RNA sequence: GGGAACGACUCGAGUAGAGUCGAAAAACAACACGCUUCGGCGUGUUGUCGACGGAGGAAGCUGAGGACGCGCUUGUGCCGCAGCAGGGAAGCGCACCGUAAAUCAGAGGUGAUUCGUCACCUCUAACCCUGUCUAAUAUUUCGAUAUUAGACAGGGAAAAGAAACAACAACAACAAC
Reactivity to DMS in 0.01 (KOAc 150mM, MgCl2 10mM, bicine 150mM(pH8.5), 24C), signal-to-noise 9, nucleotides 027 to 126: a030c010a010a000c000a000c000g010c000u000u010c210g030g020c000g030u000g010u000u000g010u000c050g010a090c080g000g010a090g000g000a110a080g000c040u000g010a080g010g000a080c100g020c090g010c090u000u000g020u000g010c040c030g010c060a060g010c070a080g010g000g000a070a060g010c070g010c050a100c050c050g010u010a040a080a100u010c160a030g000a010g010g020u000g000a040u000u010c180g010u000c000a010c000c000u000c000u000a040a090
Reactivity to 2A3 in 0.01 (KOAc 150mM, MgCl2 10mM, bicine 150mM(pH8.5), 24C), signal-to-noise 9, nucleotides 027 to 126: a010c000a010a000c000a000c010g020c010u040u070c220g140g000c000g010u000g000u000u000g000u010c010g030a030c030g020g040a040g030g030a090a030g020c050u060g040a060g040g040a050c050g040c010g030c070u090u110g090u160g080c020c030g020c030a040g020c030a040g030g010g020a050a010g020c020g010c040a030c020c020g070u140a020a060a110u150c070a030g000a000g000g010u010g010a020u020u060c160g040u010c050a000c000c000u000c000u000a010a020